The record gives the reactivity of an RNA of 207 nucleotides to 2A3. It was measured as part of the RMDB library RNAMAK. The RNA was probed in 150 mM KOAc, 10 mM MgCl2 and 150 mM bicine (pH 8.5) at 24 C. For 2A3 the reverse transcriptase was SuperScript II with manganese.
RNA sequence: GGGAACGACUCGAGUAGAGUCGAAAAUAGUGCUUCGGCACUACGCAACGCGUACUACCCUAGAGGAUGGUAAGACAGUAUUAAUCCCAAAUAGGAUUGGGUACAAUGACGCCAUCUACCCACCUAGGGUAUCGCCACACAGGAACUUCGGUUCCAAUCCAAAAGGUGACUUCGGUCACCUUUUGGAAAAAGAAACAACAACAACAAC
Reactivity to 2A3 in 0.01 (KOAc 150mM, MgCl2 10mM, bicine 150mM(pH8.5), 24C), signal-to-noise 2, nucleotides 027 to 156: u040a010g000u000g010c000u010u070c220g080g000c020a000c000u010a010c070g130c070a070a090c060g010c000g090u130a130c030u010a010c020c000c000u000a000g000a020g030g020a020u030g000g000u030a150a000g000a060c130a000g060u070a040u080u120a010a010u060c000c020c040a200a170a100u250a060g090g120a140u070u070g050g000g000u040a000c080a050a100u050g010a020c040g010c020c000a000u020c000u060a070c010c050c010a130c010c000u000a000g000g010g000u000a000u030c020g000c030c000a010c010a020c020a060g020g030a000a000c000u090u230c180g040g000u020u000c050c000a010a020